[RMDB]
RNA sequence: GGGAACGACUCGAGUAGAGUCGAAAAAUAAUCAUCUAGCAGGAUCUGCAAUCGCUGAUUACAAGCUAGACUUUGCAUUACACCACUUACAUGAAUUAGGGGCAGUCGCAAAGCGCUACGGCCACCGCAUCACAGCGCACCCUGGUCAAUUUGUGCACUGUGAAUUAAGGUUCGCCUUAAUUCACAGAAAAGAAACAACAACAACAAC
Reactivity to 2A3 in 0.01 (KOAc 150mM, MgCl2 10mM, bicine 150mM(pH8.5), 24C), signal-to-noise 8, nucleotides 027 to 156: a000u160a010a050u070c030a000u020c000u010a000g000c010a020g020g060a010u000c020u050g010c040a080a290u280c200g000c020u030g010a020u010u070a230c050a150a040g000c000u000a010g000a010c020u080u080u080g020c020a040u060u050a040c040a040c030c020a050c060u120u100a040c020a100u120g110a160a100u140u060a120g010g000g020g000c030a030g060u060c020g000c050a070a090a070g070c060g010c050u050a030c040g030g010c010c020a070c040c030g000c020a020u080c030a020c020a020g020c020g000c010a030c010c020c000u030g030g030u060c040a080a120u050u060u150g040u020g000c030a010
Reactivity to DMS in 0.01 (KOAc 150mM, MgCl2 10mM, bicine 150mM(pH8.5), 24C), signal-to-noise 3, nucleotides 027 to 156: a110u010a060a060u000c070a080u010c010u000a090g020c000a210g020g000a050u000c040u000g000c020a140a100u010c170g020c080u010g020a100u000u000a060c050a080a170g010c040u000a060g010a050c040u010u010u010g010c050a070u000u010a070c060a100c000c010a090c090u000u000a080c080a100u000g000a060a050u010u010a100g020g010g010g020c030a060g020u010c090g050c030a030a050a090g020c070g000c020u000a030c040g030g000c020c050a070c050c020g010c030a070u000c020a070c060a080g030c030g020c050a090c020c010c040u000g040g000u010c080a040a140u000u000u000g040u000g010c030a160